[RMDB]
RNA sequence: GGGAACGACUCGAGUAGAGUCGAAAAGAUAUGGACCCACCCAGCUUUUGACGCGCAUUCGGAAACGAAUGGCGAUAAGCUGGUGGGUCCUAAGUCAAAGUGUAAGACGCUUCGGCGUCUUACACAAGGUCCUUCAAUUGUUCGCAAUUGAAGGACCAAAAGAAACAACAACAACAAC
Reactivity to 2A3 in 0.01 (KOAc 150mM, MgCl2 10mM, bicine 150mM(pH8.5), 24C), signal-to-noise 2, nucleotides 027 to 126: g010a010u030a020u100g010g000a010c000c000c020a020c090c180c030a020g000c030u160u270u240u290g090a080c010g100c010g050c050a010u020u010c000g030g030a030a030a040c020g000a040a000u010g060g030c010g050a060u060a190a050g030c000u000g020g010u010g000g000g000u010c000c000u000a010a000g000u000c040a090a070a070g000u010g000u010a020a010g000a010c000g000c010u040u140c280g090g000c000g000u000c000u000u000a000c000a000c000a000a020
Reactivity to DMS in 0.01 (KOAc 150mM, MgCl2 10mM, bicine 150mM(pH8.5), 24C), signal-to-noise 1, nucleotides 027 to 126: g010a010u000a150u010g010g000a000c000c000c000a020c250c060c120a010g000c010u010u000u000u010g000a150c070g010c010g000c000a000u000u000c000g000g000a030a060a060c000g020a000a010u000g010g030c010g000a090u000a010a010g000c000u000g010g020u000g000g000g000u000c000c000u000a000a060g000u000c040a090a090a180g020u000g000u000a020a010g010a000c010g000c000u000u020c200g000g010c000g020u000c010u000u000a000c010a000c030a070a040

The data come from the RNA Mapping Database (RMDB), library TTRDEL. Chemical mapping of a 177-nucleotide RNA with 2A3 and DMS. The RNA was probed in 150 mM KOAc, 10 mM MgCl2 and 150 mM bicine (pH 8.5) at 24 C.